Structure probing data (DMS and 2A3) for a 207-nucleotide construct.
It was measured as part of the RMDB library M2RFOK.
The reactions ran in a buffer of 150 mM KOAc, 10 mM MgCl2 and 150 mM bicine (pH 8.5), at 24 C.
RNA sequence: GGGAACGACUCGAGUAGAGUCGAAAACCUCACUACAUUUUACUGUUCCUAAAGAAUUUGUGACAGGUACAGUAAAACGUAUUGCAAGGUUUAUCAGUGCCUAUAAACAGGUAAAUAACAAUAUAUGAAAAGCAAAGACUGUUCGCAGUCUUUGCAACCAGAUAUUAACGUUCGCGUUAAUAUCUGGAAAAGAAACAACAACAACAAC
Reactivity to DMS in 0.01 (KOAc 150mM, MgCl2 10mM, bicine 150mM(pH8.5), 24C), signal-to-noise 1, nucleotides 027 to 156: c010c000u000c030a050c060u000a010c010a000u000u000u000u010a000c020u000g010u000u000c000c000u000a170a170a160g000a170a190u000u000u000g030u020g000a250c300a030g010g040u000a010c010a030g050u010a000a010a010a020c030g040u000a010u010u000g030c000a170a030g030g020u000u010u010a110u010c000a090g000u000g000c060c010u020a160u000a070a070a160c060a060g010g030u020a030a070a110u000a100a120c070a030a090u010a170u030a110u000g010a050a090a120a250g000c000a010a020a030g000a020c000u000g020u000u010c290g000c000a010g000u010c000u000u000u010g020c000a010a030
Reactivity to 2A3 in 0.01 (KOAc 150mM, MgCl2 10mM, bicine 150mM(pH8.5), 24C), signal-to-noise 6, nucleotides 027 to 156: c000c000u000c000a010c020u010a010c000a030u000u000u000u010a000c000u000g000u030u050c010c010u070a090a120a080g160a270a300u210u240u280g140u120g060a060c090a060g000g000u000a000c000a000g000u000a000a000a000a000c010g010u010a000u000u040g020c060a070a060g050g010u010u030u040a110u110c060a030g090u010g070c000c020u110a110u200a150a140a040c090a020g010g000u050a060a090a120u170a090a060c040a110a030u120a010u070a050u270g060a060a090a040a010g000c000a010a000a000g000a000c000u000g020u040u050c170g000c090a000g000u000c000u000u000u000g000c000a000a000